[RMDB]
Structure probing data (2A3 and DMS) for a 207-nucleotide construct. The reactions ran in a buffer of 150 mM KOAc, 10 mM MgCl2 and 150 mM bicine (pH 8.5), at 24 C.

RNA sequence: GGGAACGACUCGAGUAGAGUCGAAAAAUGGAGUACGCGGAGUGGUUCCGCAGUCCUUCAACAUUCGCCUCGCGGGUGGCUGUUGGGAUGGACGGGAGUUGCAAUGGCUUGCAGAAUUUCUCUGCAAUGCUACGCGAUUCGCUCGGAGGCAAGGCGAACAGAAUUUAAACUUCGGUUUAAAUUCUGUAAAAGAAACAACAACAACAAC
Reactivity to 2A3 in 0.01 (KOAc 150mM, MgCl2 10mM, bicine 150mM(pH8.5), 24C), signal-to-noise 3, nucleotides 027 to 156: a000u060g000g000a010g010u050a000c010g000c040g040g000a040g080u300g080g110u260u030c000c000g000c030a020g010u030c000c000u020u030c030a060a040c010a130u050u060c000g020c000c010u010c080g060c070g010g060g030u060g040g000c070u090g070u140u060g040g020g020a100u100g070g000a030c010g010g000g010a050g000u050u030g030c050a080a110u300g030g010c010u000u000g000c000a020g010a060a170u100u300u070c170u060c000u020g000c000a000a010u100g000c000u010a030c040g000c000g010a020u070u000c010g000c060u040c060g040g010a030g020g020c030a030a030g020g000c030g020a030
Reactivity to DMS in 0.01 (KOAc 150mM, MgCl2 10mM, bicine 150mM(pH8.5), 24C), signal-to-noise 1, nucleotides 027 to 156: a130u010g000g010a050g010u000a030c020g000c010g040g010a110g050u000g050g000u010u000c020c010g080c020a070g030u000c050c000u020u010c030a060a150c050a190u000u000c000g020c020c010u000c080g020c080g010g010g040u000g000g020c060u010g000u000u100g000g050g000a100u010g000g010a160c110g020g010g000a030g020u010u000g000c010a070a190u000g000g000c020u000u000g000c040a040g030a050a300u000u000u020c240u000c000u010g000c000a010a010u000g000c000u000a020c180g000c010g000a100u000u010c030g010c080u000c010g030g010a210g020g040c050a060a040g020g000c020g020a100